[RMDB]
RNA sequence: GGGAACGACUCGAGUAGAGUCGAAAAGCCUAGGAGAUCAAGGCUAUGGUGAGCCAUGAUCACGCUACUACUACAUUCCUUGAAAUCAUAAGCUGAAGAUUGUGAUGGAAAUGUGACUAGAAGUAACUGUAGUCUAGGUCCUCAGGCCCACCAAGAAAUUAAAUGAUGAGUUCGCUCAUCAUUUAAUAAAAGAAACAACAACAACAAC
Reactivity to DMS in 0.01 (KOAc 150mM, MgCl2 10mM, bicine 150mM(pH8.5), 24C), signal-to-noise 4, nucleotides 027 to 156: g030c010c000u010a060g030g020a100g000a090u000c000a170a070g010g010c040u000a040u000g030g010u000g000a130g010c040c050a200u000g010a050u000c010a050c020g030c060u000a250c020u000a060c010u000a070c010a050u000u000c010c000u000u010g010a140a090a160u000c100a110u010a080a180g020c130u020g010a090a090g020a080u000u000g040u010g000a060u000g010g000a040a060a060u000g010u010g020a070c030u010a090g020a080a050g010u000a100a070c040u000g030u000a030g000u000c020u000a090g010g020u000c010c010u000c030a060g020g020c010c010c050a090c030c020a060a130g000a100a090
Reactivity to 2A3 in 0.01 (KOAc 150mM, MgCl2 10mM, bicine 150mM(pH8.5), 24C), signal-to-noise 9, nucleotides 027 to 156: g000c010c010u030a080g020g030a130g010a020u040c040a050a020g000g000c000u010a030u020g040g010u040g030a060g050c040c020a080u090g040a210u040c010a010c020g020c000u060a040c010u010a020c000u010a020c030a060u040u040c030c000u050u090g110a100a110a050u120c060a060u080a210a070g070c100u120g100a050a020g030a110u050u050g020u040g030a090u070g010g030a030a050a050u040g010u020g010a010c020u030a070g040a170a020g150u020a040a010c010u010g000u010a000g000u000c010u020a060g010g000u010c000c000u020c020a010g020g000c010c010c000a020c000c010a030a030g080a050a170